[RMDB]
RNA sequence: GGGAACGACUCGAGUAGAGUCGAAAAUGGGCAACAUUCCGAGGGGACCGUCCCUCGGUAAUGGCGAAUGGGACCCAGAACUCUCUCUAGAUUCCCAGAGAGAAUCGAGAGAAAACUGGCUCUCCCUAGAGUGUUAUGUUCGCAUAACACAAAAGAAACAACAACAACAAC
Reactivity to DMS in 0.01 (KOAc 150mM, MgCl2 10mM, bicine 150mM(pH8.5), 24C), signal-to-noise 9, nucleotides 027 to 129: u010g040g000g000c080a080a120c010a060u000u010c010c000g010a000g020g000g020g000a120c210c300g060u100c000c000c000u000c000g000g010u040a000a020u000g000g000c130g020a120a090u030g000g000g000a030c110c010c000a020g010a100a200c180u020c030u000c000u010c000u020a080g040a050u010u000c020c020c140a130g030a070g030a160g000a040a020u010c020g000a000g000a020g040a000a020a090a120c010u000g000g010c030u010c060u030c020c010c010u000a040g020a140
Reactivity to 2A3 in 0.01 (KOAc 150mM, MgCl2 10mM, bicine 150mM(pH8.5), 24C), signal-to-noise 9, nucleotides 027 to 129: u100g030g050g010c040a130a050c000a090u020u000c000c000g000a000g010g010g010g060a180c050c050g300u300c040c000c000u000c000g000g000u010a000a000u010g010g000c020g050a040a050u060g010g000g000a020c050c000c000a010g010a040a030c020u000c000u000c000u000c010u030a060g000a030u010u010c000c020c140a040g050a000g000a010g000a090a000u010c010g000a010g000a000g000a010a020a010a050c000u000g000g000c000u000c000u010c010c000c000u050a070g080a020

Source: RMDB library 15KLIB, as collected in RNAgym. An RNA of 170 nucleotides, treated with DMS and 2A3 and read out base by base. For 2A3 the reverse transcriptase was SuperScript II with manganese. The DMS profile rests on 93,376 reads.